[RMDB]
RNA sequence: GGGAACGACUCGAGUAGAGUCGAAAAUGCCAGUCGAGCGGAGUUUCAUGCACCUUCAUAACGACCGGAGCCGAUGUUGCCGGAACGGGCGUUUCCGAGGCAGCAUCCACUGCGGCGGAACUGGAAAGUCAGGAUUUAGCUUCGGCUAAAUCCUGACAAAAGAAACAACAACAACAAC
Reactivity to DMS in 0.01 (KOAc 150mM, MgCl2 10mM, bicine 150mM(pH8.5), 24C), signal-to-noise 1, nucleotides 027 to 126: u000g000c010c030a020g000u030c030g030a300g030c070g020g010a070g020u000u000u000c100a130u020g020c070a140c080c000u000u030c110a070u000a120a190c020g010a130c010c000g010g000a070g010c050c290g000a050u000g010u050u000g010c070c010g020g010a030a060c020g000g000g010c120g010u000u000u000c090c090g020a120g020g040c000a030g030c010a000u000c020c180a060c000u000g000c010g000g020c020g000g020a130a070c100u000g000g000a110a170a110
The record gives the reactivity of an RNA of 177 nucleotides to DMS. The reactions ran in a buffer of 150 mM KOAc, 10 mM MgCl2 and 150 mM bicine (pH 8.5), at 24 C. The DMS profile rests on 746 reads. For DMS the reverse transcriptase was MarathonRT.